[RMDB]
RNA sequence: GGGAACGACUCGAGUAGAGUCGAAAAGAUAUGGACUACCCACCGUUAUUAGGCGUUGAAACGAUUCGGAAACGAAUCGUGGAGCCUUCUAACGAGGUCCUAAGUCAAAGAGGCGUUCGCGCCUCAACUGUUCAUUAAGGUUCGCCUUAAUGAACAGAAAAGAAACAACAACAACAAC
Reactivity to DMS in 0.01 (KOAc 150mM, MgCl2 10mM, bicine 150mM(pH8.5), 24C), signal-to-noise 6, nucleotides 027 to 126: g020a080u000a210u000g010g020a010c000u010a110c020c000c010a300c140c000g000u000u000a000u000u000a020g000g020c000g000u010u010g000a150a120a020c010g010a010u000u010c010g000g000a100a080a140c010g010a010a000u000c000g020u000g000g000a090g010c000c000u010u000c020u000a010a010c000g010a080g000g010u000c010c000u000a060a130g000u000c080a100a130a130g000a000g020g020c000g020u000u010c200g020c020g010c000c000u000c010a010a100
Reactivity to 2A3 in 0.01 (KOAc 150mM, MgCl2 10mM, bicine 150mM(pH8.5), 24C), signal-to-noise 4, nucleotides 027 to 126: g040a020u140a110u180g000g000a010c010u130a200c030c010c010a020c020c000g000u000u020a020u020u000a010g050g040c130g220u250u040g010a020a020a000c010g000a000u010u000c010g010g020a020a060a070c020g000a010a000u010c010g000u000g000g000a000g000c010c000u000u000c000u000a010a000c010g000a010g040g000u010c000c000u050a250a070g160u110c060a090a080a060g000a000g010g010c030g050u060u120c210g010c010g100c040c030u000c000a000a010